Conditions: 150 mM KOAc, 10 mM MgCl2 and 150 mM bicine (pH 8.5), 24 C. Chemical mapping of a 207-nucleotide RNA with 2A3. Source: RMDB library M2RFPK, as collected in RNAgym. 2A3 adducts were read by reverse transcription with SuperScript II with manganese. For 2A3, 919 sequencing reads were counted.
RNA sequence: GGGAACGACUCGAGUAGAGUCGAAAAGUUAUGCUCUCGCUGCCUAAUGGCGGUGCGGGAAACCCACUCUAAAGUCCUUAGGGUUAGCCCCUUAAGGCGGGGUUCGAAGGCACCUGGCAACAGAAGCUGAAACUGUGCACAUUCGUGUGCACAGUAAUCACUGUACUGAGUUCGCUCAGUACAGUGAAAAAGAAACAACAACAACAAC
Reactivity to 2A3 in 0.01 (KOAc 150mM, MgCl2 10mM, bicine 150mM(pH8.5), 24C), signal-to-noise 2, nucleotides 027 to 156: g070u120u110a080u300g060c010u010c010u010c020g040c040u050g030c010c000u300a300a230u280g010g000c030g040g030u030g010c020g000g000g000a030a050a050c010c050c010a020c010u260c090u210a130a070a250g300u000c000c000u000u000a000g020g000g000u000u130a020g020c000c000c030c000u010u020a000a000g000g000c000g000g000g000g000u010u190c160g040a080a040g000g000c000a010c010c010u050g300g000c000a010a010c000a010g000a000a000g010c020u040g020a080a000a000c000u000g000u000g050c010a000c000a000u020u110c200g090u050g000u000g030c000a000c000a000g000u000a000a000